RNA sequence: GGGAACGACUCGAGUAGAGUCGAAAAGGAUGUCCCGACCGGAGGCCGACAAUCCAGGGAACCGGAUGUCAUCACGUUGUUGCGGUACCAGAUGGCAUCUUAAAUCCGAUCUGCAAAUAAGCAUGUAAAAACCGGCAUACGUUCGCGUAUGCCGGAACAAUGAUUUCAUCUUCGGAUGAAAUCAUUGAAAAGAAACAACAACAACAAC
Reactivity to DMS in 0.01 (KOAc 150mM, MgCl2 10mM, bicine 150mM(pH8.5), 24C), signal-to-noise 2, nucleotides 027 to 156: g000g020a080u020g010u000c000c000c000g020a110c050c060g050g000a040g040g050c050c010g000a080c040a050a150u000c010c040a140g040g000g030a170a110c070c080g070g030a020u000g020u010c000a060u000c030a170c210g000u000u010g020u000u000g000c000g040g010u000a090c070c100a100g000a040u010g010g000c010a030u000c000u000u010a030a080a120u010c010c020g030a110u000c020u000g030c070a050a090a110u010a110a110g010c050a070u000g010u000a060a090a110a110a150c000c000g010g040c010a000u000a000c000g030u010u010c300g060c040g000u000a000u020g000c000c000g000g030a010a010
Reactivity to 2A3 in 0.01 (KOAc 150mM, MgCl2 10mM, bicine 150mM(pH8.5), 24C), signal-to-noise 2, nucleotides 027 to 156: g030g000a050u040g030u060c000c010c000g010a040c020c060g050g000a020g040g060c060c010g040a060c080a070a090u050c030c050a030g030g020g000a020a060c060c030g020g000a000u010g010u010c000a010u000c020a020c120g000u040u040g050u100u060g080c060g020g110u150a090c030c030a030g000a010u010g000g000c010a010u000c000u020u070a050a080a010u010c000c010g050a100u050c000u050g020c040a010a040a210u140a150a060g040c070a060u160g030u280a000a030a000a050a050c000c000g010g030c000a000u000a000c010g020u020u070c150g000c020g150u010a000u000g000c000c000g000g000a000a000